Source information
The record gives the reactivity of an RNA of 177 nucleotides to DMS and 2A3. It was measured as part of the RMDB libraries RFM100 and RFMREP. DMS (dimethyl sulfate) methylates the pairing face of unpaired adenines and cytosines.
[RMDB]
RNA sequence: GGGAACGACUCGAGUAGAGUCGAAAAGUAGAAGGAGCUUCCCAAAUAAGUCGCCGUACUGGAGAGACGGUUGCGGACUUGUGAAGCUGAAAGGUUCGGAUGUUUUGACAAGAUCAAAGCUGCUGCUGUAUAGUGAUUAAUUCGUUAAUCACUAUACAAAAGAAACAACAACAACAAC
Reactivity to DMS in 0.01 (KOAc 150mM, MgCl2 10mM, bicine 150mM(pH8.5), 24C), signal-to-noise 9, nucleotides 027 to 126: g010u010a080g010a100a120g010g010a050g010c020u000u000c000c030c010a050a060a060u010a120a160g010u000c080g010c000c010g020u010a070c040u010g010g020a160g000a110g010a030c020g010g010u000u000g020c040g000g000a130c300u000u000g010u000g000a050a030g010c020u000g010a060a070a080g010g000u010u010c070g000g000a090u010g000u010u000u000u000g000a030c050a090a140g010a270u010c020a020a040a050g010c020u010g000c030u000g000c190u000
Reactivity to 2A3 in 0.01 (KOAc 150mM, MgCl2 10mM, bicine 150mM(pH8.5), 24C), signal-to-noise 9, nucleotides 027 to 126: g130u120a030g030a150a040g100g090a010g000c000u010u010c010c050c000a020a040a010u070a010a000g030u030c020g000c020c000g030u080a150c080u130g100g080a120g010a020g010a080c000g000g000u010u040g040c030g010g030a030c020u010u010g010u020g020a010a000g000c020u030g070a110a080a020g080g030u080u070c050g050g030a070u070g030u020u030u020u030g040a040c100a150a060g010a110u030c020a020a020a020g010c020u090g010c020u030g010c000u010